This 177-nucleotide RNA was probed chemically with DMS. Reactivities are rounded to 0.1 and cut off at 0 and 3. The RNA was probed in 150 mM KOAc, 10 mM MgCl2 and 150 mM bicine (pH 8.5) at 24 C. Reactivities are given for positions 27 through 126. It was measured as part of the RMDB library TTRINS. For DMS the reverse transcriptase was MarathonRT.
RNA sequence: GGGAACGACUCGAGUAGAGUCGAAAAGAUAUGGAGAUGGUUCACCUUAACGAAUCAUAGAACUACUCUGAGUAAUCGGAAACGAUUACCAGAGCUAUGACUAUUAAGGUGAACCAUCUCCUAAGUCCGAUACUUUUUCGUUCGCGAAAAAGUAUCGAAAAGAAACAACAACAACAAC
Reactivity to DMS in 0.01 (KOAc 150mM, MgCl2 10mM, bicine 150mM(pH8.5), 24C), signal-to-noise 2, nucleotides 027 to 126: g000a120u000a300u010g000g000a010g010a010u000g000g020u020u000c010a000c000c000u000u000a000a010c130g010a110a100u000c000a000u000a010g000a050a040c100u020a300c010u000c000u010g000a180g010u000a000a010u000c000g000g000a180a080a230c000g010a030u000u000a010c000c020a000g000a010g000c010u000a000u010g000a040c100u000a300u000u000a040a000g020g020u000g000a010a000c000c010a000u000c000u000c000c000u000a000a020g010u010c030